An RNA of 207 nucleotides, treated with 2A3 and read out base by base. Reactivities are given for positions 27 through 156. Conditions: 150 mM KOAc, 10 mM MgCl2 and 150 mM bicine (pH 8.5), 24 C. The 2A3 profile rests on 953 reads. The data come from the RNA Mapping Database (RMDB), library M2RFPK.
RNA sequence: GGGAACGACUCGAGUAGAGUCGAAAACAAGCUCGUGCUUGCGACUUACACGUAGGGCGAGGGGUGGGCGAAAGUUGCCAUGAGACCGUAACUUUCGUAGUCAUUGAUAAAGGGGCAGGUCUCGCUCAAAAGACGUUGGUCUUCGGACCAACGUCAAGGAUCUCAUUGUGUUCGCACAAUGAGAUCCAAAAGAAACAACAACAACAAC
Reactivity to 2A3 in 0.01 (KOAc 150mM, MgCl2 10mM, bicine 150mM(pH8.5), 24C), signal-to-noise 2, nucleotides 027 to 156: c010a040a040g060c000u050c080g080u120g040c020u070u070g020c030g030a070c020u100u180a020c120a000c040g070u090a070g000g010g030c090g080a060g040g000g000g130u300g000g000g030c030g010a000a000a000g040u000u000g000c040c090a110u170g060a010g000a000c000c010g010u010a000a000c000u000u020u040c050g010u000a010g090u080c030a100u010u160g090a050u140a110a040a040g020g020g000g030c030a000g060g000u000c000u000c010g020c040u120c030a060a140a000a000g000a000c000g000u000u000g000g000u010c010u030u050c160g060g000a000c000c000a000a000c000g000u000c000a000a000